[RMDB]
RNA sequence: GGGAACGACUCGAGUAGAGUCGAAAAGCCGGAUCAGGCGCAUGCGCCGUACCGGCCCACUGAUCUGAUCGAUCGGCCUAUCGCGGCCGUACAUAGCGCGAGGCCUAGGAUCCAUGACACGGCGCGCCAGCAAUAUGCCGUUCGCGGCAUAUUGCUGAAAAGAAACAACAACAACAAC
Reactivity to 2A3 in 0.01 (KOAc 150mM, MgCl2 10mM, bicine 150mM(pH8.5), 24C), signal-to-noise 2, nucleotides 027 to 126: g040c010c060g000g000a100u120c080a070g030g050c020g000c120a060u200g020c020g000c020c050g010u010a120c030c020g000g040c010c010c000a050c020u060g030a090u050c040u050g040a110u160c060g010a030u040c020g020g030c010c040u130a230u130c070g020c070g090g050c040c000g000u020a050c030a100u190a060g020c010g000c020g030a050g030g040c020c010u050a070g150g000a010u000c030c060a110u150g040a030c000a010c110g010g010c010g000c030g000c070
Reactivity to DMS in 0.01 (KOAc 150mM, MgCl2 10mM, bicine 150mM(pH8.5), 24C), signal-to-noise 3, nucleotides 027 to 126: g020c030c010g000g000a070u000c080a090g000g000c030g030c080a090u010g020c040g010c000c070g020u000a100c080c070g020g010c010c010c020a100c050u000g010a030u000c030u000g000a090u000c140g000a070u010c090g000g030c070c060u000a080u010c100g000c060g030g020c020c050g010u010a010c120a110u010a150g020c020g010c040g010a070g010g000c010c010u000a180g010g000a020u000c020c080a100u010g010a110c150a110c050g000g020c010g020c080g000c120